[RMDB]
RNA sequence: GGGAACGACUCGAGUAGAGUCGAAAAACAGCUCAUACGUGAGCUGAACAGAUCAGUGCUUGGCACCUAGCAAGCACUCAGUAAAUACUUGUUGAGUGCCUGCUAUGUGCCAGGCAUUGUGCUGAAACUCGCUGUUAUCUUUCGAGAUAACAGCGAGAAAAGAAACAACAACAACAAC
Reactivity to DMS in 0.01 (KOAc 150mM, MgCl2 10mM, bicine 150mM(pH8.5), 24C), signal-to-noise 2, nucleotides 027 to 126: a110c010a000g000c000u000c010a020u000a130c230g030u000g000a010g010c000u010g000a080a120c050a020g000a140u040c000a030g020u000g000c020u000u000g000g010c010a000c010c020u000a020g010c010a000a050g000c010a000c000u000c000a000g000u010a040a020a140u020a170c170u020u010g020u010u010g000a010g010u000g000c000c000u000g000c010u000a000u010g000u000g000c000c000a010g010g000c000a020u000u000g010u030g000c000u000g040a170a140a120
Reactivity to 2A3 in 0.01 (KOAc 150mM, MgCl2 10mM, bicine 150mM(pH8.5), 24C), signal-to-noise 2, nucleotides 027 to 126: a010c000a000g010c010u010c000a020u040a100c220g180u010g020a010g000c000u000g030a040a010c030a000g000a090u200c010a000g000u000g000c000u000u000g000g000c000a000c000c010u000a000g000c000a010a010g020c030a010c010u010c000a000g040u030a010a100a090u260a290c180u110u130g010u020u000g030a000g000u000g000c020c000u000g000c000u010a000u010g010u020g000c000c000a000g000g000c000a000u000u000g000u020g030c000u020g060a090a080a090
Chemical mapping of a 177-nucleotide RNA with DMS and 2A3. Source: RMDB libraries RFM100 and RFMREP, as collected in RNAgym. High 2A3 reactivity points to a flexible backbone, as in loops and unpaired stretches. For 2A3, 1,491 sequencing reads were counted. The reactions ran in a buffer of 150 mM KOAc, 10 mM MgCl2 and 150 mM bicine (pH 8.5), at 24 C.